[RMDB]
RNA sequence: GGGAACGACUCGAGUAGAGUCGAAAAGUCCCCGCUUGAGUGACAAUAUCGAUGAUCAAGGCUUUUGGAUUUCCACGAUGCACCUUGGCGGUGACACUGUAAAUUGUUCUGGGACGCGUGUGCAAUGCGCUUCGGACGUUUUCGAACGUCCGAAGCGAAAAGAAACAACAACAACAAC
Reactivity to DMS in 0.01 (KOAc 150mM, MgCl2 10mM, bicine 150mM(pH8.5), 24C), signal-to-noise 1, nucleotides 027 to 126: g000u010c020c040c020c090g000c060u000u000g040a070g020u010g000a050c080a130a050u010a060u000c060g020a060u000g020a080u000c030a060a080g020g050c090u000u040u000u000g030g010a140u000u020u000c060c080a040c080g010a060u010g020c080a070c050c020u000u000g000g060c070g000g000u000g010a090c040a080c190u050g000u010a020a070a110u000u000g000u010u000c070u000g050g010g020a050c060g040c090g130u010g020u000g010c140a080a080u000g010
Reactivity to 2A3 in 0.01 (KOAc 150mM, MgCl2 10mM, bicine 150mM(pH8.5), 24C), signal-to-noise 1, nucleotides 027 to 126: g000u000c000c000c000c000g000c060u060u050g040a050g020u000g070a060c020a090a180u030a020u200c040g000a060u060g020a000u160c020a020a020g180g000c060u150u130u060u100g080g110a180u010u080u040c000c010a070c060g050a050u020g010c000a030c030c010u050u190g090g030c020g190g020u020g020a000c020a000c040u090g040u170a080a170a130u160u120g010u170u000c030u020g000g000g020a010c100g020c000g010u040g020u100g040c050a060a190u030g050